[RMDB]
RNA sequence: GGGAACGACUCGAGUAGAGUCGAAAAGAUGUCAUUUGGUAAGGCUAUAUCAGGUGGCACUACAGGUACUAUGUCCCAUCAUGGUGCUUGUGAACUCGUAGCUUGAUGGGACAAGUUAUGAGUGAUCUAUUUUACUAUAGCCUUAGUGAGAUAGAGACGGCCCAUUACUAUUCGUAGUAAUGGGCCGAAAAGAAACAACAACAACAAC
Reactivity to 2A3 in 0.01 (KOAc 150mM, MgCl2 10mM, bicine 150mM(pH8.5), 24C), signal-to-noise 1, nucleotides 027 to 156: g100a090u010g000u020c000a000u040u020u070g000g000u020a000a000g060g000c000u020a040u000a010u020c010a020g000g050u030g000g000c020a000c040u080a050c050a080g160g000u000a000c000u060a170u070g000u000c050c000c000a000u030c000a010u050g150g010u040g130c000u100u050g080u160g080a190a150c120u020c110g000u000a020g120c010u000u030g000a030u030g070g020g030a010c000a000a020g010u030u080a160u190g050a000g080u110g120a070u000c030u000a000u030u000u000u000a000c000u000a000u000a020g030c000c000u000u000a060g000u010g010a020g000a000u000a010g030a010g000a030